This 207-nucleotide RNA was probed chemically with 2A3 and DMS. The DMS profile rests on 3,243 reads. It was measured as part of the RMDB library OK3TST.

[RMDB]
RNA sequence: GGGAACGACUCGAGUAGAGUCGAAAAAUCCAUUGACGCCGGAAGAAAACUCGAUUCGUUAUCUUCUUCUUCUCCGAUUCGAUGAUGCUCUGUUUCUUCCGGUUGUGGCGGUGGCGGAGAAAUUAAAGUUUUGGUUUUUCUGGGUUUAGCGUUAGCACCAGUACUAUCCAUUCGUGGAUAGUACUGGAAAAGAAACAACAACAACAAC
Reactivity to 2A3 in 0.01 (KOAc 150mM, MgCl2 10mM, bicine 150mM(pH8.5), 24C), signal-to-noise 3, nucleotides 027 to 156: a000u020c000c000a020u000u120g060a020c060g010c010c000g030g020a010a000g020a000a080a030a040c050u090c070g010a040u080u060c010g030u030u160a090u060c100u230u070c010u100u030c010u180u040c070u000c070c050g010a050u050u040c030g040a030u050g010a020u090g080c030u020c080u130g070u020u010u010c010u000u000c000c030g010g000u040u170g000u000g010g020c040g000g030u030g000g000c000g020g050a030g050a080a050a050u150u140a140a090a050g040u000u050u080u100g020g000u030u100u020u080u010c050u050g090g000g000u090u120u190a040g030c010g040u050u090a040g030c040a040
Reactivity to DMS in 0.01 (KOAc 150mM, MgCl2 10mM, bicine 150mM(pH8.5), 24C), signal-to-noise 1, nucleotides 027 to 156: a080u000c000c010a210u000u020g010a010c060g050c010c060g020g010a070a050g000a020a020a090a070c010u000c050g000a140u000u010c030g030u000u000a040u000c040u010u000c080u000u000c040u030u000c030u000c040c040g000a140u000u000c030g030a080u000g000a110u000g000c050u000c060u010g010u000u010u000c000u010u010c020c000g000g010u000u000g020u010g040g030c030g020g020u000g020g020c030g000g030a090g030a050a060a040u010u010a070a090a170g030u000u000u000u000g010g030u000u000u000u000u000c020u000g010g020g000u000u010u010a080g000c060g000u000u010a120g030c050a240